[RMDB]
RNA sequence: GGGAACGACUCGAGUAGAGUCGAAAAGAUAUGGAUCCUAGUAGCUGAGCGAUAAGCUGCGUCGGAAACGACACAGCUUUUGACGCUCCGAAAGGAUCCUAAGUCAAAAGUGCCCUUCGGGGCACAAUCAUACUGGCUGCUUCGGCAGCCAGUAUGAAAAAGAAACAACAACAACAAC
Reactivity to DMS in 0.01 (KOAc 150mM, MgCl2 10mM, bicine 150mM(pH8.5), 24C), signal-to-noise 1, nucleotides 027 to 126: g000a030u000a300u000g000g000a000u000c000c000u000a090g010u000a220g000c280u010g000a010g000c000g020a090u000a000a010g000c000u000g000c010g030u000c010g010g000a130a070a260c000g000a020c000a020c000a000g000c000u010u010u000u010g010a160c050g000c010u000c000c030g020a090a210a110g000g000a010u000c000c000u000a010a070g000u010c030a140a090a080a080g010u010g000c010c000c010u000u000c190g020g000g010g040c010a000c000a000a070
An RNA of 177 nucleotides, treated with DMS and read out base by base. The RNA was probed in 150 mM KOAc, 10 mM MgCl2 and 150 mM bicine (pH 8.5) at 24 C. DMS adducts were read by reverse transcription with MarathonRT.